[RMDB]
This 177-nucleotide RNA was probed chemically with DMS.
For DMS, 733 sequencing reads were counted.
It was measured as part of the RMDB library OK2TRN.

RNA sequence: GGGAACGACUCGAGUAGAGUCGAAAAUCAUCUUUUUGCAGGCGCUGGUUAAAGCCCCAGCCCCGAUCGGGGCGGUAGAGGGUUGCCCAGAUCCAGAGGAAAGGCCACAACACGUGCAGGGUAAACAUCUAGGAAUUGGGUUCGCCCAAUUCCUAGAAAAAGAAACAACAACAACAAC
Reactivity to DMS in 0.01 (KOAc 150mM, MgCl2 10mM, bicine 150mM(pH8.5), 24C), signal-to-noise 1, nucleotides 027 to 126: u010c060a090u000c030u000u000u000u000u000g040c150a220g000g030c090g000c030u010g000g000u010u020a060a150a120g020c050c010c000c010a300g000c000c000c000c000g000a110u000c150g020g000g000g010c000g000g030u010a030g010a180g040g000g020u000u000g040c230c000c000a040g000a030u000c030c000a070g000a090g020g000a050a060a090g010g010c010c000a090c090a020a030c100a030c050g020u000g020c080a030g030g020g030u000a080a080a080c170a140